Chemical mapping of a 170-nucleotide RNA with DMS and 2A3.
It was measured as part of the RMDB library 15KLIB.
For DMS the reverse transcriptase was MarathonRT.

RNA sequence: GGGAACGACUCGAGUAGAGUCGAAAAGUUCAACAAGAUCUUGACGUUAUUUUGCCUGGUGAGUUUUCCAAGAAGCAGUUAGGACUGCUCCAACCUACUGACAAUUCUACAACUGUUAGUGUUACUGCAAUCGAGAUCUUCGGAUCUCGAAAAAGAAACAACAACAACAAC
Reactivity to DMS in 0.01 (KOAc 150mM, MgCl2 10mM, bicine 150mM(pH8.5), 24C), signal-to-noise 4, nucleotides 027 to 129: g010u020u020c040a120a060c130a070a120g000a080u030c040u000u000g020a220c140g040u000u000a010u000u000u010u000g020c020c020u020g030g090u060g010a080g020u000u000u000u000c030c060a020a050g040a070a090g010c000a010g020u030u050a100g010g030a140c060u020g040c040u020c060c050a070a060c070c020u000a030c050u040g010a030c020a080a060u060u000c170u000a110c160a030a050c080u040g000u020u050a020g040u050g020u050u000a060c050u000g020c140a050a160
Reactivity to 2A3 in 0.01 (KOAc 150mM, MgCl2 10mM, bicine 150mM(pH8.5), 24C), signal-to-noise 4, nucleotides 027 to 129: g020u040u010c010a030a010c010a060a090g030a040u030c030u050u030g020a000c010g070u090u080a100u030u130u080u090g060c000c000u000g050g000u030g010a070g000u010u000u040u000c020c040a070a040g030a040a020g070c020a000g000u010u110a050g030g130a080c010u030g050c010u010c000c000a030a040c000c000u030a000c020u000g030a000c010a020a140u080u030c030u100a070c030a120a030c030u020g020u010u000a060g040u010g050u120u110a090c020u020g030c000a020a070